[RMDB]
RNA sequence: GGGAACGACUCGAGUAGAGUCGAAAACUGGUUCGCCGUCGCCCAUCGAGAACGGACGGAAGAGCUGCGGCUCGGCAUCAUUGGGUGACAGCGAUGGUGCCUGCUUGCCGGCCAAGAGGGCGAGACGGCCUCGCUGACCUUUCGAGGUCAGCGAGGCAAAAGAAACAACAACAACAAC
Reactivity to 2A3 in 0.01 (KOAc 150mM, MgCl2 10mM, bicine 150mM(pH8.5), 24C), signal-to-noise 1, nucleotides 027 to 126: c090u060g000g160u130u080c050g000c000c000g000u000c000g080c000c020c000a170u040c040g060a090g010a100a060c070g000g090a010c010g040g040a160a020g060a040g050c000u100g030c100g140g000c000u000c040g000g000c020a020u030c000a010u010u070g050g030g040u050g050a020c060a030g080c000g010a030u020g050g000u000g000c000c080u040g070c000u070u090g080c010c000g010g000c020c000a040a070g050a000g000g000g060c020g080a020g040a000c040g050